[RMDB]
The record gives the reactivity of an RNA of 207 nucleotides to 2A3. Conditions: 150 mM KOAc, 10 mM MgCl2 and 150 mM bicine (pH 8.5), 24 C.
RNA sequence: GGGAACGACUCGAGUAGAGUCGAAAAUUGGGAGGCCAAGGUGGGAGAUUCAGUUGAGACCAGGAGUCGAGACCGGCCUGAGCUGAACGUAGUGACAUCCUGUCUCUACAUAAAAGAAAUUUAAAAAUUAGCCUGGUGUGGUGGUGCACACCUGUAGGUGUUACCAUAGGUUCGCCUAUGGUAACACAAAAGAAACAACAACAACAAC
Reactivity to 2A3 in 0.01 (KOAc 150mM, MgCl2 10mM, bicine 150mM(pH8.5), 24C), signal-to-noise 1, nucleotides 027 to 156: u090u050g060g000g010a010g000g000c010c040a040a010g000g020u040g000g000g010a020g020a070u090u030c100a040g070u000u080g090a010g020a030c020c100a010g000g030a020g010u050c030g010a010g030a080c000c010g010g010c020c010u020g020a020g000c010u030g030a100a060c030g010u090a010g060u110g090a000c000a120u110c000c090u060g000u000c000u000c020u030a050c010a020u190a020a030a080a000g130a000a060a010u200u250u240a100a160a020a090a120u050u140a060g010c020c020u020g000g000u000g020u030g030g020u010g010g000u090g000c000a000c010a050c000c010u030g030u040a050g020

The data come from the RNA Mapping Database (RMDB), library OK3TST.